[RMDB]
RNA sequence: GGGAACGACUCGAGUAGAGUCGAAAAGAUAUGGAAAUCGACUGACAUGCUUGGUGAUCGGAAACGAUCAGGAAGCAACAGCAGUACGAUUUCCUAAGUCAAAGAUGAUCGGGUUCGCCCGAUCAUCCAUUAGUUAGCGGUUCGCCGCUAACUAAUGAAAAGAAACAACAACAACAAC
Reactivity to 2A3 in 0.01 (KOAc 150mM, MgCl2 10mM, bicine 150mM(pH8.5), 24C), signal-to-noise 5, nucleotides 027 to 126: g010a000u050a020u120g000g000a000a000a000u000c010g000a010c000u020g030a100c030a270u300g000c010u070u040g300g120u030g180a010u010c000g010g000a050a040a010c010g020a000u000c000a020g160g260a020a010g010c060a140a080c100a200g130c010a000g010u080a300c010g000a000u000u000u000c000c010u000a020a010g020u010c040a170a040a100g010a000u010g000a000u000c000g050g000g000u080u100c300g110c020c000c000g000a000u000c000a000u000c000
Reactivity to DMS in 0.01 (KOAc 150mM, MgCl2 10mM, bicine 150mM(pH8.5), 24C), signal-to-noise 8, nucleotides 027 to 126: g000a030u000a300u010g010g000a000a010a010u000c000g010a080c000u000g000a070c130a250u010g010c000u000u000g000g020u000g000a000u000c000g010g000a090a060a170c000g000a010u000c000a030g000g010a020a020g000c000a040a100c300a150g010c000a000g010u000a130c010g010a010u000u010u000c000c000u000a020a080g000u000c040a130a120a130g010a010u000g000a000u000c000g020g000g000u000u010c300g020c000c000c000g010a000u000c000a000u000c000